[RMDB]
RNA sequence: GGGAACGACUCGAGUAGAGUCGAAAAGUAUUAGGUGGUAAGCCGAGCUCUUCCUCGGUCUUGUUCUGAAUGCACACAUGUCUAGGGGCUAAGGAUGUCCUACAGGUACCCGCACGUAACCUUCAGAUAACCAUUUGAAGUUCGCUUCAAAUGGUUAAAAAGAAACAACAACAACAAC
Reactivity to 2A3 in 0.01 (KOAc 150mM, MgCl2 10mM, bicine 150mM(pH8.5), 24C), signal-to-noise 6, nucleotides 027 to 126: g130u110a120u190u170a100g040g040u090g050g070u120a080a020g000c000c000g010a010g010c020u030c000u160u090c030c000u000c040g030g020u020c020u050u120g020u040u030c010u010g080a110a030u120g010c040a010c000a000c010a080u080g010u030c030u050a050g000g000g010g040c020u040a050a060g080g020a080u120g050u070c010c010u040a060c020a010g000g040u090a120c010c010c020g000c010a030c030g040u050a020a080c000c010u050u060c010a010g010a150
Reactivity to DMS in 0.01 (KOAc 150mM, MgCl2 10mM, bicine 150mM(pH8.5), 24C), signal-to-noise 6, nucleotides 027 to 126: g020u000a070u010u010a060g010g030u000g000g040u030a070a120g010c020c020g000a110g020c170u020c090u010u010c170c020u010c050g010g010u020c040u000u000g000u010u000c040u000g010a060a080u010g000c050a060c120a080c080a040u010g010u010c040u010a100g000g000g010g020c050u010a100a080g000g000a090u020g010u020c020c020u000a060c110a040g000g000u000a070c060c030c030g000c070a040c060g010u000a070a090c060c020u000u010c050a070g010a210
The data come from the RNA Mapping Database (RMDB), libraries RFM100 and RFMREP. The record gives the reactivity of an RNA of 177 nucleotides to 2A3 and DMS. 2A3 is a SHAPE reagent: it acylates the 2'-hydroxyl of flexible nucleotides of all four kinds. For DMS the reverse transcriptase was MarathonRT. For 2A3 the reverse transcriptase was SuperScript II with manganese.